Description: Structure probing data (DMS) for a 177-nucleotide construct.
RNA sequence: GGGAACGACUCGAGUAGAGUCGAAAAUCGCUGAUGACCCGAAUGCGCGGUGCCGCCAUCACAUCGACAUGGCAACUCAUCCAGUAUUCGCGCACAAGGUGCAUUUCGCGCGGCAGGACCGGCACCACCGGCGUGGUAAUUUCGAUUACCACGCCGGAAAAGAAACAACAACAACAAC
Reactivity to DMS in 0.01 (KOAc 150mM, MgCl2 10mM, bicine 150mM(pH8.5), 24C), signal-to-noise 1, nucleotides 027 to 126: u000c040g000c040u000g000a060u010g000a130c020c010c010g000a130a150u000g000c010g020c000g000g000u000g040c030c100g000c030c020a100u000c230a090c110a060u000c130g000a080c200a050u060g000g020c060a140a090c090u000c150a080u000c160c110a090g000u010a040u000u000c040g040c010g020c030a040c100a040a090g020g000u010g000c060a080u000u000u000c190g000c050g010c120g000g050c110a090g040g000a210c050c040g000g050c100a000c010c160a170
The DMS profile rests on 502 reads.